[RMDB]
RNA sequence: GGGAACGACUCGAGUAGAGUCGAAAAGAUAUGGACCAUGGAGUUCUUUUGACGAAGCUACAUCGGAAACGAUGUAGGCUUCGAUAAGAACCCAUGGUCCUAAGUCAAAGUAGCCUUCGGGCUACAACCAAUACGUGGGGUUCGCCCCACGUAUUGGAAAAGAAACAACAACAACAAC
Reactivity to 2A3 in 0.01 (KOAc 150mM, MgCl2 10mM, bicine 150mM(pH8.5), 24C), signal-to-noise 2, nucleotides 027 to 126: g020a010u080a040u160g000g000a000c040c000a020u040g000g010a300g090u020u030c020u000u170u150u250g260a150c060g010a000a010g000c010u010a000c000a010u010c000g050g000a040a070a050c040g000a000u020g020u040a020g000g020c010u000u000c010g010a000u020a050a010g000a000a000c000c010c000a000u000g000g000u000c000c010u010a000a010g000u020c000a000a020a000g000u000a000g000c020c010u050u090c300g110g000g020c020u000a010c000a000a000
Reactivity to DMS in 0.01 (KOAc 150mM, MgCl2 10mM, bicine 150mM(pH8.5), 24C), signal-to-noise 2, nucleotides 027 to 126: g000a030u010a300u010g000g000a000c010c000a000u010g030g010a200g010u020u000c000u000u000u030u000g030a240c100g010a010a000g020c000u000a000c000a010u000c000g020g020a140a130a160c010g010a000u010g010u000a020g060g010c000u010u010c000g000a100u000a000a020g000a010a010c000c000c000a000u000g000g000u000c010c000u000a000a060g000u000c030a080a160a220g000u000a000g000c000c000u010u000c190g030g010g010c000u000a000c020a050a130